Structure probing data (DMS and 2A3) for a 177-nucleotide construct. The reactions ran in a buffer of 150 mM KOAc, 10 mM MgCl2 and 150 mM bicine (pH 8.5), at 24 C. The 2A3 profile rests on 2,088 reads.
RNA sequence: GGGAACGACUCGAGUAGAGUCGAAAAGCUUCGGCAUCAAAGGGACCCGCCUUGACUGCUCUCUGCCGCAUUCGCCGAUUCGGAAAGUCGCACUAAUCUACAAAGUGUGGCAAGAAGUGGAGUCGGAGACUCCCUCCGACUUCGGUCGGAGGGAGUCAAAAGAAACAACAACAACAAC
Reactivity to DMS in 0.01 (KOAc 150mM, MgCl2 10mM, bicine 150mM(pH8.5), 24C), signal-to-noise 2, nucleotides 027 to 126: g010c000u000u010c070g000g000c000a100u030c060a010a050a130g020g000g010a070c090c010c030g000c010c020u000u000g030a070c070u030g000c000u010c050u010c000u000g000c000c040g000c130a080u010u000c150g040c030c020g030a090u000u010c030g020g000a150a250a140g050u020c010g000c000a000c030u000a170a080u070c240u040a100c270a080a100a000g010u000g000u030g000g000c010a140a070g030a160a110g010u000g010g000a040g020u000c000g000g010a200
Reactivity to 2A3 in 0.01 (KOAc 150mM, MgCl2 10mM, bicine 150mM(pH8.5), 24C), signal-to-noise 3, nucleotides 027 to 126: g050c020u100u100c030g060g020c030a020u090c130a060a150a100g010g010g050a090c000c000c020g020c000c000u030u040g060a030c030u030g000c020u000c000u000c000u020g010c000c000g010c000a040u110u050c020g090c100c010g050a040u030u000c000g050g100a120a000a070g020u010c000g010c020a020c020u070a090a110u150c090u220a130c040a050a150a020g000u010g000u000g030g020c070a030a010g070a080a060g030u160g050g000a010g010u000c010g000g020a030